[RMDB]
RNA sequence: GGGAACGACUCGAGUAGAGUCGAAAAACGCUGAGUACGCUCAGCGAAACGCGGGGAUGCGAUCUCCCCUUUCAGGUCUAGCGGCCCAAGCAUCGCGUCCAUCGUUGUUGCAAGGACGCCGCAUGAACAUAUGGGUAGUGUUCGCACUACCCAUAUGAAAAGAAACAACAACAACAAC
Reactivity to DMS in 0.01 (KOAc 150mM, MgCl2 10mM, bicine 150mM(pH8.5), 24C), signal-to-noise 8, nucleotides 027 to 126: a120c020g010c000u000g020a010g000u010a100c270g050c000u010c000a010g010c010g000a020a050a060c160g010c160g000g000g010g020a040u010g000c090g000a080u010c090u000c000c000c000c030u010u020u010c080a090g000g020u010c030u010a240g010c060g000g000c110c030c020a080a290g010c050a020u000c020g010c010g010u010c090c080a150u020c050g010u000u010g000u000u000g000c070a050a160g000g010a080c100g020c010c030g020c010a130u020g010a080a190
Reactivity to 2A3 in 0.01 (KOAc 150mM, MgCl2 10mM, bicine 150mM(pH8.5), 24C), signal-to-noise 6, nucleotides 027 to 126: a000c010g000c000u000g000a000g020u050a040c220g030c080u000c000a000g000c000g010a060a040a010c100g020c090g030g010g000g000a020u100g050c030g030a070u040c030u040c020c000c000c020u000u080u050c080a020g000g040u010c030u090a020g020c020g010g000c000c000c000a020a030g010c020a020u030c010g010c010g030u080c090c040a120u140c060g030u060u300g020u000u010g020c050a070a070g030g010a050c150g000c000c010g010c010a010u040g020a030a030
The data come from the RNA Mapping Database (RMDB), libraries RFM100 and RFMREP. The record gives the reactivity of an RNA of 177 nucleotides to DMS and 2A3.